[RMDB]
This 177-nucleotide RNA was probed chemically with 2A3. For 2A3, 1,134 sequencing reads were counted. The RNA was probed in 150 mM KOAc, 10 mM MgCl2 and 150 mM bicine (pH 8.5) at 24 C.

RNA sequence: GGGAACGACUCGAGUAGAGUCGAAAAGAAUUGGUAUGUAAGCUACCGCUUCCGGUAGCUGCGUCACACUUUAAGAGUGUGCAUACUGAGCCGAAGCUCAGCUUCGGUCCCCCAAGGGAAGGCCAAAGGUCCAUGGUCAUUUCGAUGACCAUGGACCAAAAGAAACAACAACAACAAC
Reactivity to 2A3 in 0.01 (KOAc 150mM, MgCl2 10mM, bicine 150mM(pH8.5), 24C), signal-to-noise 2, nucleotides 027 to 126: g120a040a040u020u010g010g000u000a010u000g000u000a000a000g000c000u000a000c000c000g080c050u030u000c040c000g000g010u000a000g010c010u000g000c000g000u000c000a000c000a000c000u010u160u200a300a080g250a020g180u000g000u020g000c000a000u000a000c000u030g010a000g000c000c000g020a000a000g040c050u080c300a030g030c010u000u030c000g000g000u000c000c000c000c000c020a000a010g090g000g000a010a000g050g000c050c020a000a130a040